[RMDB]
This 207-nucleotide RNA was probed chemically with DMS and 2A3.
For 2A3 the reverse transcriptase was SuperScript II with manganese.
As a SHAPE reagent, 2A3 marks flexible, mostly unpaired nucleotides at the ribose 2'-OH.
Values cover nucleotides 27 to 156.
Conditions: 150 mM KOAc, 10 mM MgCl2 and 150 mM bicine (pH 8.5), 24 C.
The data come from the RNA Mapping Database (RMDB), library M2RFPK.

RNA sequence: GGGAACGACUCGAGUAGAGUCGAAAACGAGUGCAAUAAAGACGCGGUUGCCGAUCGGUAUGGAUGCCACCGUGACGGCUCAAUCACACAAGUGCCAACGACAACGAGGCGCUCGCUAUUGCUGCGUAAAAGCGACGAUCGUUCGCGAUCGUCGCAACCGACAGUAAUUGUUCGCAAUUACUGUCGGAAAAGAAACAACAACAACAAC
Reactivity to DMS in 0.01 (KOAc 150mM, MgCl2 10mM, bicine 150mM(pH8.5), 24C), signal-to-noise 2, nucleotides 027 to 156: c020g010a070g010u000g010c050a150a160u000a100a090a080g040a110c020g010c040g040g010u000u010g050c010c000g010a120u000c020g030g010u000a030u010g000g020a100u010g000c080c100a080c040c020g000u010g000a130c160g020g020c030u000c100a110a090u010c060a100c100a060c070a070a110g000u000g010c000c000a060a080c060g000a070c040a020a070c030g000a160g000g040c000g030c010u000c000g020c030u040a050u000u000g020c010u010g000c000g000u000a050a060a050a100g020c000g010a040c000g010a000u000c000g100u000u020c300g010c050g060a040u000c000g000u000c000g060c020a010a030
Reactivity to 2A3 in 0.01 (KOAc 150mM, MgCl2 10mM, bicine 150mM(pH8.5), 24C), signal-to-noise 5, nucleotides 027 to 156: c040g020a020g060u090g030c050a040a070u040a150a200a000g110a030c030g000c030g040g020u040u060g000c020c020g040a070u040c020g020g050u140a130u150g100g060a090u130g090c020c010a020c000c030g010u020g100a110c050g010g000c000u000c060a050a090u110c010a020c020a010c010a100a050g020u010g050c010c010a100a040c100g100a050c030a120a010c060g060a060g050g000c010g020c030u040c000g000c010u020a040u110u150g020c060u030g000c000g020u040a060a070a020a070g000c020g000a000c000g000a000u000c000g000u050u020c140g000c020g090a000u000c000g000u000c000g010c000a000a000